[RMDB]
RNA sequence: GGGAACGACUCGAGUAGAGUCGAAAAGUCCUAGUGGCGAACGGGAGCUUAGGGCAUUGCCCGGUGAUGUACAGUCCCUUUCCACAACGUUGGAGAUGAAGCUGGGCUUUCGAGUCUGCGCCUGCAUAAUUGUGGAGCUAUUCGUAGCUCCACAAUUAAAAGAAACAACAACAACAAC
Reactivity to DMS in 0.01 (KOAc 150mM, MgCl2 10mM, bicine 150mM(pH8.5), 24C), signal-to-noise 4, nucleotides 027 to 126: g010u000c000c000u000a050g020u010g020g010c060g000a150a110c050g020g000g010a100g000c040u020u000a180g000g000g000c000a140u010u040g020c000c000c010g000g000u000g040a080u010g020u010a130c110a070g000u000c050c070c080u000u000u000c000c000a040c030a210a090c150g000u050u000g020g010a050g000a030u010g010a090a120g000c010u000g000g000g010c020u000u000u010c020g000a090g010u010c070u020g020c150g000c020c010u020g010c110a170u050
Reactivity to 2A3 in 0.01 (KOAc 150mM, MgCl2 10mM, bicine 150mM(pH8.5), 24C), signal-to-noise 3, nucleotides 027 to 126: g040u050c050c000u030a050g090u090g110g030c050g000a040a070c040g070g000g000a070g000c010u110u100a060g040g010g000c030a210u060u300g020c000c000c000g000g010u130g000a130u090g070u070a040c030a040g070u120c000c000c000u020u000u000c060c000a080c060a170a130c140g140u260u080g010g010a080g000a100u080g060a020a050g000c000u030g010g000g060c000u020u040u040c030g020a030g040u020c030u060g030c000g030c030c000u000g030c000a030u010